[RMDB]
RNA sequence: GGGAACGACUCGAGUAGAGUCGAAAAUUUUGAUGAUUUGUAGUUAGUAAGCAUUAAUUUACCAUUUUUAAUCUCAGCUUUACCUUCAACAGUUUCACCGUUUUUAGAACUGAAUGUACCUGUUAGGCAUAAGAUACGCGUUCGCGCGUAUCUUAUGAAAAGAAACAACAACAACAAC
Reactivity to 2A3 in 0.01 (KOAc 150mM, MgCl2 10mM, bicine 150mM(pH8.5), 24C), signal-to-noise 5, nucleotides 027 to 126: u090u100u010u080g060a090u040g020a070u020u020u190g110u020a130g090u110u060a080g040u140a130a000g000c050a070u050u050a080a120u060u120u140a090c020c020a050u080u010u000u030u260a060a070u020c020u010c060a070g020c030u050u040u070a050c010c000u000u070c000a000a000c000a070g020u010u050u110c060a070c050c050g030u030u010u030u060u120a130g050a070a010c010u000g090a090a100u080g030u060a030c010c010u020g060u090u070a040g070g040
Reactivity to DMS in 0.01 (KOAc 150mM, MgCl2 10mM, bicine 150mM(pH8.5), 24C), signal-to-noise 3, nucleotides 027 to 126: u000u010u020u020g010a020u000g010a050u010u000u000g010u000a030g010u030u010a040g000u020a060a050g000c060a060u030u020a060a060u010u010u020a090c070c030a100u030u010u020u000u020a020a070u000c000u020c030a080g010c070u000u010u020a100c020c000u000u000c060a030a010c020a030g010u000u010u010c010a070c090c080g020u000u000u000u020u010a110g000a030a060c020u010g000a060a070u020g020u020a070c080c000u000g000u000u000a040g010g010

The record gives the reactivity of an RNA of 177 nucleotides to 2A3 and DMS.
The reactions ran in a buffer of 150 mM KOAc, 10 mM MgCl2 and 150 mM bicine (pH 8.5), at 24 C.
Values are in units of 0.01, from 0 to 300, in steps of 10.
For 2A3 the reverse transcriptase was SuperScript II with manganese.
For 2A3, 2,584 sequencing reads were counted.